An RNA of 177 nucleotides, treated with 2A3 and DMS and read out base by base. For 2A3, 2,387 sequencing reads were counted.
[RMDB]
RNA sequence: GGGAACGACUCGAGUAGAGUCGAAAAAUUACGGGCGGCGCACGUGGAGCUGCGAUCCCUCCGCCCAUCGCGUGCUCUCUCGGUGGCCCAGACGCUGCAAACGGACAGGCGGGCCACCUGCAACGAACAGCCCAUCUAUAUUCGUAUAGAUGGGCUGAAAAGAAACAACAACAACAAC
Reactivity to 2A3 in 0.01 (KOAc 150mM, MgCl2 10mM, bicine 150mM(pH8.5), 24C), signal-to-noise 2, nucleotides 027 to 126: a000u180u150a130c100g000g000g020c010g030g000c010g000c030a000c050g050u160g220g160a070g050c200u010g010c010g020a060u080c010c000c000u000c000c010g000c020c000c020a040u070c030g040c040g010u020g020c000u050c030u000c020u050c120g010g000u010g010g010c000c030c010a110g040a040c210g040c180u020g010c040a040a160a190c070g070g090a060c000a030g010g010c020g000g000g000c020c000a000c000c000u000g000c010a030a020c020g060a040a020
Reactivity to DMS in 0.01 (KOAc 150mM, MgCl2 10mM, bicine 150mM(pH8.5), 24C), signal-to-noise 3, nucleotides 027 to 126: a070u000u020a090c150g000g000g030c040g010g020c090g000c020a030c060g010u000g000g020a110g040c250u000g010c020g000a090u000c020c030c010u000c030c020g010c020c040c030a120u020c080g010c020g010u000g000c040u010c070u010c120u020c140g000g010u000g010g010c010c010c010a140g030a050c080g000c000u000g010c090a050a100a180c290g010g000a180c020a040g000g010c070g000g020g010c000c000a010c010c010u010g010c090a110a050c100g000a100a150
2A3 adducts were read by reverse transcription with SuperScript II with manganese.
Source: RMDB library M2PK90, as collected in RNAgym.